[RMDB]
RNA sequence: GGGAACGACUCGAGUAGAGUCGAAAACUGUUGCUUCUCUGCUAUCUUCCAAGUUGUGAAGAACAGACAACUCGGCAACCCAGAAGAGACAAAAACACUUUCCGCAGUUGUGCAGAUCGACGCUGAACCCAGAUAUACUUUUCGAAGUAUAUCUGGGAAAAGAAACAACAACAACAAC
Reactivity to DMS in 0.01 (KOAc 150mM, MgCl2 10mM, bicine 150mM(pH8.5), 24C), signal-to-noise 5, nucleotides 027 to 126: c080u010g010u010u000g020c050u000u000c060u010c000u010g010c060u000a120u000c020u000u010c010c020a220a160g020u010u010g010u010g020a050a020g010a060a120c090a070g000a060c090a040a040c060u000c050g000g010c110a050a060c030c050c030a100g020a090a050g010a080g010a090c090a030a040a050a070a080c120a050c100u000u000u000c020c040g020c080a060g000u000u000g020u000g000c050a050g000a060u000c060g000a070c090g000c050u000g000a110a240
Reactivity to 2A3 in 0.01 (KOAc 150mM, MgCl2 10mM, bicine 150mM(pH8.5), 24C), signal-to-noise 3, nucleotides 027 to 126: c010u020g050u110u020g030c040u070u060c020u030c010u040g000c030u050a060u150c020u000u040c020c000a180a180g120u200u110g060u120g110a060a040g000a070a030c010a030g100a010c020a000a080c020u020c040g040g000c030a050a020c010c010c000a030g000a050a030g060a020g000a030c070a040a150a010a030a010c070a010c050u100u140u110c050c030g000c040a050g000u080u070g020u050g000c010a020g010a130u150c040g030a030c030g000c050u050g050a030a050